[RMDB]
Record summary
This 177-nucleotide RNA was probed chemically with 2A3. The reactions ran in a buffer of 150 mM KOAc, 10 mM MgCl2 and 150 mM bicine (pH 8.5), at 24 C.
RNA sequence: GGGAACGACUCGAGUAGAGUCGAAAACAAAACUGACCAGCUAUGAGGUCAUACAUCGUCAUAGGAAAACAAAACAAAACUGACCAGGUAUGAGGUCAUACAUCGUCAUAUCAAACAAAACAACAAACGGUGAGGUAUGGUUCGCCAUACCUCACCGAAAAGAAACAACAACAACAAC
Reactivity to 2A3 in 0.01 (KOAc 150mM, MgCl2 10mM, bicine 150mM(pH8.5), 24C), signal-to-noise 2, nucleotides 027 to 126: c020a000a010a000a010c040u030g000a010c000c000a000g030c000u000a000u020g010a000g000g000u000c010a000u260a120c100a100u220c160g110u000c000a030u050a000g210g070a000a000a000a220c180a000a080a000a100c130a000a150a000a090c070u000g000a000c000c000a010g000g000u000a020u000g000a000g000g010u000c000a020u100a000c050a000u100c240g040u000c000a000u050a000u040c000a010a130a030c050a070a070a020a000c030a000a030c020a050a110a000